[RMDB]
RNA sequence: GGGAACGACUCGAGUAGAGUCGAAAAACUAAUCCAAAGCAAGUAUAGGAGAACAGGUUUUUAACUAUUUUUAGGAAGAUAAAAAAUAGUAUUUGACAGUCUAACACUAACUGAACAAUAAGUGUUAAAAAGUCGUCUCUGUUCGCAGAGACGACAAGGGAUAAUUAUACUUCGGUAUAAUUAUCCCAAAAGAAACAACAACAACAAC
Reactivity to 2A3 in 0.01 (KOAc 150mM, MgCl2 10mM, bicine 150mM(pH8.5), 24C), signal-to-noise 1, nucleotides 027 to 156: a010c030u100a120a000u050c000c000a020a010a020g000c000a000a030g030u050a020u060a100g030g030a060g020a130a070c100a190g110g000u020u020u010u000u000a030a000c000u010a000u010u010u030u070u010a010g050g050a110a120g030a140u160a050a080a000a000a000a000u000a000g000u010a040u010u020u030g010a010c000a000g000u000c000u010a000a000c000a000c000u010a010a000c000u010g020a030a000c010a010a000u000a000a000g000u010g000u010u000a020a060a020a000a000g000u000c000g000u010c000u000c000u000g080u040u050c150g030c120a000g000a000g000a000c010g000a000c010a000a030

Chemical mapping of a 207-nucleotide RNA with 2A3. Conditions: 150 mM KOAc, 10 mM MgCl2 and 150 mM bicine (pH 8.5), 24 C. For 2A3 the reverse transcriptase was SuperScript II with manganese. Reactivities are rounded to 0.1 and cut off at 0 and 3.